Chemical mapping of a 177-nucleotide RNA with DMS and 2A3.

[RMDB]
RNA sequence: GGGAACGACUCGAGUAGAGUCGAAAACCACCAGUUAAGUGAAUGCUUUGCCACAGUCUUAGACAUUGUAAGCUGGGCCGAGGUUCGCUUAGGCUGGAGGAAAGUGCCAUCCCUUCGGGGAUGGCACCAAGCCAAGUUAGUUCGCUAACUUGGCUUGAAAAGAAACAACAACAACAAC
Reactivity to DMS in 0.01 (KOAc 150mM, MgCl2 10mM, bicine 150mM(pH8.5), 24C), signal-to-noise 3, nucleotides 027 to 126: c000c000a270c010c010a010g000u000u000a010a020g020u000g010a020a000u000g010c010u000u000u000g000c010c000a160c010a000g000u010c010u010u000a020g020a230c270a180u010u000g010u000a010a010g010c000u000g000g000g000c000c060g000a000g000g000u000u000c000g000c020u000u000a020g020g020c010u010g000g000a140g000g000a070a060a100g010u000g010c010c000a020u000c000c000c000u000u020c180g000g010g010g000a010u010g000g010c020a000c000
Reactivity to 2A3 in 0.01 (KOAc 150mM, MgCl2 10mM, bicine 150mM(pH8.5), 24C), signal-to-noise 4, nucleotides 027 to 126: c010c000a010c010c010a020g010u020u030a010a010g010u010g020a020a010u250g300c020u000u010u010g010c010c000a250c010a270g100u160c050u010u050a060g080a240c070a300u150u300g090u130a010a000g000c000u000g000g000g040c010c010g010a000g010g010u010u010c000g000c000u010u010a030g050g000c000u030g010g020a030g020g090a130a110a020g000u000g010c000c010a010u000c020c010c000u000u050c230g010g000g000g000a000u010g000g020c030a000c000
Overview: DMS adducts were read by reverse transcription with MarathonRT. The DMS profile rests on 3,662 reads.